The data come from the RNA Mapping Database (RMDB), library RFMREP. Structure probing data (2A3 and DMS) for a 177-nucleotide construct. 2A3 adducts were read by reverse transcription with SuperScript II with manganese. The 2A3 profile rests on 3,298 reads. For DMS, 851 sequencing reads were counted. Values are in units of 0.01, from 0 to 300, in steps of 10.
RNA sequence: GGGAACGACUCGAGUAGAGUCGAAAAUUGUGGACCCAUUUUCGAUAUUUACUCACAAAUGGAAUUCAAGGGGAACAACUUCGGUCUCAGCACUUUAAUUAUUCUUCUCGUUCCCACCUAAUUUCGCCACAUAUUUCUCGUUCGCGAGAAAUAUGUGAAAAGAAACAACAACAACAAC
Reactivity to 2A3 in 0.01 (KOAc 150mM, MgCl2 10mM, bicine 150mM(pH8.5), 24C), signal-to-noise 4, nucleotides 027 to 126: u060u020g040u140g090g130a110c010c000c000a010u000u000u000u000c000g010a000u080a270u300u010u010a030c000u020c030a030c030a040a190a140u150g050g050a040a030u090u070c050a090a080g010g000g000g050a050a030c020a040a020c060u100u090c070g090g000u010c040u000c070a050g040c050a040c060u100u080u110a090a060u110u090a120u080u030c010u100u010c020u010c040g000u000u000c010c000c000a010c000c000u090a130a170u020u080u040c060g020c030
Reactivity to DMS in 0.01 (KOAc 150mM, MgCl2 10mM, bicine 150mM(pH8.5), 24C), signal-to-noise 1, nucleotides 027 to 126: u000u000g020u010g010g000a190c080c080c070a130u000u000u000u000c010g000a020u010a020u010u000u000a010c050u010c010a090c190a030a090a120u040g010g020a060a080u000u000c070a080a080g020g000g000g010a050a050c130a030a060c050u000u000c090g010g000u010c030u000c130a090g000c090a070c080u000u000u000a040a070u060u010a080u000u020c010u010u000c100u000c010g020u010u000c000c000c000a080c220c050u000a080a120u000u000u000c080g000c140